[RMDB]
The record gives the reactivity of an RNA of 177 nucleotides to DMS and 2A3.
RNA sequence: GGGAACGACUCGAGUAGAGUCGAAAAGAUUGACGGCUGGGUGAACACCGGUGACCUGCUGGAGCGCCGCGAGGACGGCUUCUUCUACAUCAAGGGAAGAUCCUCGGAGAUGAUCAUCUGUGGUGGCACGCACAGCAUGGUUCGCCAUGCUGUGCGUAAAAGAAACAACAACAACAAC
Reactivity to DMS in 0.01 (KOAc 150mM, MgCl2 10mM, bicine 150mM(pH8.5), 24C), signal-to-noise 2, nucleotides 027 to 126: g000a100u000u000g000a190c050g000g020c040u020g030g010g000u000g000a050a090c050a140c060c000g020g000u000g030a150c050c020u000g060c040u020g000g000a040g070c100g000c030c010g000c020g000a010g020g000a050c180g050g000c000u000u010c000u030u010c000u030a180c110a100u030c200a050a060g010g070g020a070a000g000a140u000c000c000u000c020g000g000a060g010a120u000g000a060u000c080a080u000c000u020g020u000g000g040u000g000g000c100
Reactivity to 2A3 in 0.01 (KOAc 150mM, MgCl2 10mM, bicine 150mM(pH8.5), 24C), signal-to-noise 2, nucleotides 027 to 126: g070a100u100u160g080a000c030g030g050c050u090g000g130g050u100g070a120a020c010a050c010c010g000g000u030g090a080c000c040u050g020c000u030g030g050a040g000c020g030c010c000g000c010g080a040g100g000a020c010g070g060c000u010u000c000u090u060c000u020a200c020a260u240c180a080a050g010g060g000a020a030g020a040u010c000c000u000c000g000g000a110g030a040u170g020a060u050c000a000u020c010u010g020u040g040g030u000g050g030c020
2A3 adducts were read by reverse transcription with SuperScript II with manganese. Conditions: 150 mM KOAc, 10 mM MgCl2 and 150 mM bicine (pH 8.5), 24 C.